An RNA of 177 nucleotides, treated with 2A3 and DMS and read out base by base.
The 2A3 profile rests on 1,179 reads.
Values cover nucleotides 27 to 126.
High DMS reactivity at an A or C suggests that its Watson-Crick edge is free.
For 2A3 the reverse transcriptase was SuperScript II with manganese.
RNA sequence: GGGAACGACUCGAGUAGAGUCGAAAAGUAAGCAAAGACGUAAUAACCGUCAUGGUUAGUAAAGUGAGCGCAAGCCGUAAGAAAUGCAAACGCGUUAUGAUUCAGAACACAUGGUGCGCUAUUAUAAGCUAGCCUAUUACUUCGGUAAUAGGCUAGCAAAAGAAACAACAACAACAAC
Reactivity to 2A3 in 0.01 (KOAc 150mM, MgCl2 10mM, bicine 150mM(pH8.5), 24C), signal-to-noise 2, nucleotides 027 to 126: g020u060a060a020g080c080a060a090a070g130a040c040g030u010a040a090u040a040a030c020c010g030u090c000a030u070g000g000u060u050a050g000u050a020a040a030g030u050g090a000g000c020g010c030a000a040g080c030c000g000u000a050a040g060a100a200a040u100g000c070a000a100a150c130g000c010g090u100u040a090u070g120a050u060u240c070a020g080a210a000c030a000c000a050u020g000g010u010g000c060g000c000u000a030u170u090a060u000a120a000
Reactivity to DMS in 0.01 (KOAc 150mM, MgCl2 10mM, bicine 150mM(pH8.5), 24C), signal-to-noise 3, nucleotides 027 to 126: g030u000a110a120g030c140a060a070a120g040a080c060g010u000a030a040u000a020a020c190c000g020u020c170a010u000g000g000u010u000a130g000u010a070a100a170g000u000g000a020g010c100g000c050a070a210g000c070c080g030u000a110a120g000a020a170a120u000g010c030a010a240a120c100g010c030g010u000u000a060u010g000a090u000u000c110a070g010a080a050c100a070c060a060u000g000g040u000g010c130g020c030u000a030u010u000a010u000a080a120

The RNA was probed in 150 mM KOAc, 10 mM MgCl2 and 150 mM bicine (pH 8.5) at 24 C.